[RMDB]
RNA sequence: GGGAACGACUCGAGUAGAGUCGAAAACCCGCCACUGUACCUGUCUUGUAAUGCAGUGACUUGUAUAGUCCAGAGGUGGGCUGAGAGAAAAUGCCAUCCUAGGAAACAGGGUUAUUCUUCUUGUGGGGUUAUACCUUUACUUCGGUAAAGGUAUAACAAAAGAAACAACAACAACAAC
Reactivity to 2A3 in 0.01 (KOAc 150mM, MgCl2 10mM, bicine 150mM(pH8.5), 24C), signal-to-noise 7, nucleotides 027 to 126: c010c000c000g010c010c010a040c010u030g000u040a030c010c010u010g060u080c030u060u090g070u140a140a100u210g030c000a030g050u020g100a010c000u020u010g020u030a070u100a090g020u020c030c010a080g020a070g190g090u060g010g060g000c050u060g030a040g000a010g020a050a090a040a040u110g000c010c000a020u010c020c030u030a060g040g100a050a080a040c030a030g000g030g030u050u060a130u150u050c040u060u020c010u050u090g030u060g030g040g010
Reactivity to DMS in 0.01 (KOAc 150mM, MgCl2 10mM, bicine 150mM(pH8.5), 24C), signal-to-noise 6, nucleotides 027 to 126: c000c000c010g030c060c040a070c020u010g010u000a060c040c030u000g000u000c030u010u010g020u010a110a120u010g020c040a030g010u000g010a060c010u000u010g000u000a080u000a030g010u000c040c030a090g000a130g000g020u000g020g010g010c010u000g010a120g000a130g000a060a060a070a080u000g010c050c050a090u000c030c030u010a120g010g000a070a080a100c060a060g010g000g010u000u000a100u010u010c070u000u000c050u000u000g020u000g010g010g010
The record gives the reactivity of an RNA of 177 nucleotides to 2A3 and DMS.
The DMS profile rests on 8,546 reads.
It was measured as part of the RMDB library RFMREP.
For 2A3, 11,264 sequencing reads were counted.